[RMDB]
RNA sequence: GGGAACGACUCGAGUAGAGUCGAAAAGAGCCUCGAGGAUGUGGCCCCUCAUUUUUUAUCCCAUCUGCUGGGGCAGGAGUGGAGUGGUGGUGUUGAGUCCCGAGCACACAGGUCACUGUCAGCACUCUCAGCUACCACUAUUCGUAGUGGUAGCUGAAAAAGAAACAACAACAACAAC
Reactivity to DMS in 0.01 (KOAc 150mM, MgCl2 10mM, bicine 150mM(pH8.5), 24C), signal-to-noise 3, nucleotides 027 to 126: g010a120g010c030c050u000c060g000a170g000g000a040u010g010u020g000g000c020c020c030c020u010c080a010u000u030u000u020u020u080a060u000c040c000c010a050u020c060u000g000c110u030g020g000g000g030c040a070g010g000a110g020u020g020g000a110g030u000g000g020u020g000g000u000g000u030u020g020a090g000u020c010c000c040g010a080g010c030a030c080a050c100a070g000g010u020c050a040c020u000g010u020c080a090g000c030a070c030u000c050
Reactivity to 2A3 in 0.01 (KOAc 150mM, MgCl2 10mM, bicine 150mM(pH8.5), 24C), signal-to-noise 4, nucleotides 027 to 126: g050a000g040c000c020u070c060g020a080g030g020a060u080g030u180g090g000c000c000c000c010u030c010a120u070u070u030u060u080u130a110u180c010c010c010a020u040c040u140g070c030u050g000g020g040g000c000a010g010g040a070g020u120g000g060a130g030u100g040g090u090g000g000u070g040u040u060g040a020g020u010c000c020c010g020a010g000c050a020c000a000c000a040g070g020u040c000a010c080u000g080u110c060a030g010c030a040c010u000c000